[RMDB]
RNA sequence: GGGAACGACUCGAGUAGAGUCGAAAAGAAGUCUCAGCGCGACUACGCCCUCGCUGCAUAAGCAAGCGACCGCGUGUCUGUCAGCCUAGGGAAGUCCCUGACCUAGAUCCUGGCAUCGACUAAGGGACUUGCUGUUCAAUCGCGUCAGCGGGGUUGAGUGUUACAAAACGUUCGCGUUUUGUAACACAAAAGAAACAACAACAACAAC
Reactivity to 2A3 in 0.01 (KOAc 150mM, MgCl2 10mM, bicine 150mM(pH8.5), 24C), signal-to-noise 2, nucleotides 027 to 156: g070a030a010g030u010c020u000c020a020g060c040g050c050g050a010c050u180a110c000g030c000c000c010u040c030g010c000u000g000c010a110u060a220a020g030c020a000a010g040c030g220a110c010c000g170c000g050u040g030u030c020u010g000u010c000a000g010c000c000u000a010g000g000g030a040a100g030u030c020c020c000u000g210a010c000c000u010a000g000a030u080c030c000u010g010g010c020a060u070c070g040a040c030u050a130a230g030g020g000a030c000u010u000g000c000u000g050u150u210c080a170a120u210c100g010c040g270u140c020a000g000c030g000g000g000g000u030u100g030a050
Reactivity to DMS in 0.01 (KOAc 150mM, MgCl2 10mM, bicine 150mM(pH8.5), 24C), signal-to-noise 1, nucleotides 027 to 156: g000a110a110g000u020c020u010c020a180g070c090g030c090g030a060c070u020a170c000g020c040c000c010u020c010g050c000u000g040c050a240u020a110a070g050c030a110a010g000c030g020a100c000c000g020c120g000u010g020u010c040u060g000u010c000a060g050c100c010u000a000g000g000g010a220a090g010u000c020c000c020u020g020a290c020c020u030a030g000a070u000c070c030u010g030g000c020a010u000c040g000a030c020u000a140a100g020g020g000a060c030u000u000g000c000u010g010u020u010c100a150a160u010c120g000c030g000u000c120a090g030c050g000g000g030g020u000u010g000a180
Conditions: 150 mM KOAc, 10 mM MgCl2 and 150 mM bicine (pH 8.5), 24 C. The record gives the reactivity of an RNA of 207 nucleotides to 2A3 and DMS. For DMS the reverse transcriptase was MarathonRT. It was measured as part of the RMDB library ARCHII. For DMS, 2,166 sequencing reads were counted.